[RMDB]
RNA sequence: GGGAACGACUCGAGUAGAGUCGAAAACUCGGUCGGUGGCGCUGCCGUUGGGAGAUACGCUGUCCGGUUCCGGCUGGGUGAUUGACACCCCAGGAAUCCGCUCAUUCGGGUUGGCUCAUAUCCAGCCUAAUUACGGCCGAUUCGUCGGCCGUAAUUAAAAAGAAACAACAACAACAAC
Reactivity to DMS in 0.01 (KOAc 150mM, MgCl2 10mM, bicine 150mM(pH8.5), 24C), signal-to-noise 1, nucleotides 027 to 126: c050u000c030g010g040u010c010g000g040u000g040g020c070g010c070u000g020c060c050g030u010u010g000g010g010a090g020a110u010a060c090g000c110u000g010u010c040c030g020g040u000u000c020c020g010g060c100u010g020g010g040u000g000a300u000u010g010a150c040a110c030c000c020c070a210g000g000a030a030u030c040c140g000c110u000c080a130u000u000c130g010g000g020u000u010g020g000c120u020c110a060u010a100u000c010c010a080g010c030c030